An RNA of 207 nucleotides, treated with 2A3 and DMS and read out base by base. For 2A3 the reverse transcriptase was SuperScript II with manganese. The RNA was probed in 150 mM KOAc, 10 mM MgCl2 and 150 mM bicine (pH 8.5) at 24 C. For 2A3, 2,269 sequencing reads were counted.

[RMDB]
RNA sequence: GGGAACGACUCGAGUAGAGUCGAAAAUAACCGCCUUGACAGAGUCGAGGCUGACUUGCAGGUUGACAGACUUAUCACAGGCCGUUUAGCUGCGCUGAAUGCUUUUGUGGCCCAACAGUUGACUAAGUACACGGAUGUCAGAGCUUCUAGGCAGUUAGUAUGCAUUACGUUUCGACGUAAUGCAUACAAAAGAAACAACAACAACAAC
Reactivity to 2A3 in 0.01 (KOAc 150mM, MgCl2 10mM, bicine 150mM(pH8.5), 24C), signal-to-noise 3, nucleotides 027 to 156: u090a010a020c030c030g000c000c000u040u030g010a040c060a110g210a050g070u020c000g010a020g030g000c010u010g060a060c050u050u100g020c070a050g030g040u060u070g040a030c020a060g020a010c030u070u050a050u120c060a030c020a070g030g020c030c010g030u010u030u110a030g020c050u090g000c100g030c110u050g070a080a070u150g020c010u070u100u120u090g120u060g060g000c000c000c000a070a060c030a060g040u060u060g040a050c040u070a080a060g020u070a070c050a010c120g100g040a120u130g000u020c020a020g010a020g060c010u020u010c020u030a030g040g020c000a000g010u010u020a020
Reactivity to DMS in 0.01 (KOAc 150mM, MgCl2 10mM, bicine 150mM(pH8.5), 24C), signal-to-noise 2, nucleotides 027 to 156: u000a070a110c050c050g010c010c000u010u000g010a090c010a210g010a190g020u000c000g010a060g010g000c000u000g020a080c090u000u000g020c110a100g000g020u000u000g030a050c040a110g000a100c040u010u000a080u010c010a090c020a110g000g030c010c030g030u000u000u000a100g030c010u000g000c110g020c110u000g010a090a050u010g000c030u000u000u030u000g020u000g040g000c000c020c010a030a110c070a050g010u010u010g020a140c090u000a040a110g020u010a100c060a090c060g010g000a050u010g010u010c030a050g010a160g010c010u000u000c020u000a080g010g000c010a040g030u010u010a120